[RMDB]
RNA sequence: GGGAACGACUCGAGUAGAGUCGAAAAACAUGAUGCACACCAGUCAGCAUAAAAAUCAAGCAUCACUGGUUUUCCGAACGCUUGUUUUAUAGCCAGUUCAACACUUUUAACAGAUUGGGCUUUAGCAUCCCUAAAAUGGGUUCGCCCAUUUUAGGGAAAAAGAAACAACAACAACAAC
Reactivity to 2A3 in 0.01 (KOAc 150mM, MgCl2 10mM, bicine 150mM(pH8.5), 24C), signal-to-noise 1, nucleotides 027 to 126: a020c020a060u120g000a030u030g050c020a030c010a030c110c000a020g090u040c020a010g080c020a050u280a190a150a010a000a000u100c050a000a060g000c060a010u050c020a010c090u000g090g000u040u020u090u040c030c020g020a050a010c060g020c050u080u150g020u090u180u040u080a080u090a020g030c000c000a020g000u040u040c020a110a000c060a110c160u080u160u110u160a090a040c020a040g050a030u080u000g020g030g010c000u040u030u020a000g050c000a020
Reactivity to DMS in 0.01 (KOAc 150mM, MgCl2 10mM, bicine 150mM(pH8.5), 24C), signal-to-noise 2, nucleotides 027 to 126: a090c030a060u000g000a060u020g010c010a170c100a050c040c050a020g000u000c080a070g020c040a070u010a030a030a040a090a060u010c080a050a110g010c040a040u000c160a030c110u010g000g010u000u010u040u030c060c060g020a100a090c200g010c080u010u000g010u000u000u000u010a070u000a060g000c020c160a030g010u000u010c040a020a030c080a050c070u000u000u000u000a070a140c150a040g000a270u010u000g000g000g000c030u000u000u000a090g000c070a100
Chemical mapping of a 177-nucleotide RNA with 2A3 and DMS. 2A3 adducts were read by reverse transcription with SuperScript II with manganese. The RNA was probed in 150 mM KOAc, 10 mM MgCl2 and 150 mM bicine (pH 8.5) at 24 C. For DMS, 1,287 sequencing reads were counted. For 2A3, 978 sequencing reads were counted.